[RMDB]
RNA sequence: GGGAACGACUCGAGUAGAGUCGAAAAGAUAUGGAGAUACAAGGGAGCAGUUCGGAAACGAAUACUGCGAGGAUCUUGAUCUCCUAAGUCAAAUCGAAGAGCAAUGCUUCGGCAUUGCUCUUCGAAACACUAUUAAAAUCUUCGGAUUUUAAUAGUGAAAAGAAACAACAACAACAAC
Reactivity to DMS in 0.01 (KOAc 150mM, MgCl2 10mM, bicine 150mM(pH8.5), 24C), signal-to-noise 1, nucleotides 027 to 126: g000a070u000a300u020g000g000a000g000a000u000a090c000a010a000g000g000g010a030g020c010a010g000u000u000c010g000g000a100a090a190c000g010a010a060u000a080c020u010g010c000g000a080g000g010a010u000c000u030u000g010a110u000c000u000c000c000u000a020a060g010u000c030a080a090a160u000c000g030a010a000g000a020g000c000a000a040u000g010c020u000u000c220g030g010c000a000u020u000g010c000u000c000u000u010c000g000a000a070a160
Reactivity to 2A3 in 0.01 (KOAc 150mM, MgCl2 10mM, bicine 150mM(pH8.5), 24C), signal-to-noise 1, nucleotides 027 to 126: g020a010u050a050u160g020g020a050g000a020u220a300c010a000a000g040g000g000a040g010c010a030g000u030u000c010g050g050a040a060a040c000g020a060a030u210a300c010u010g010c030g060a230g000g000a000u000c000u010u000g000a000u000c000u010c000c000u010a090a030g040u000c030a000a000a240u040c040g000a030a000g060a010g000c000a000a000u000g030c040u110u180c300g040g000c000a000u020u000g000c010u010c000u010u000c000g000a000a010a000

The data come from the RNA Mapping Database (RMDB), library TTRDEL. Structure probing data (DMS and 2A3) for a 177-nucleotide construct. Conditions: 150 mM KOAc, 10 mM MgCl2 and 150 mM bicine (pH 8.5), 24 C. For 2A3, 1,620 sequencing reads were counted.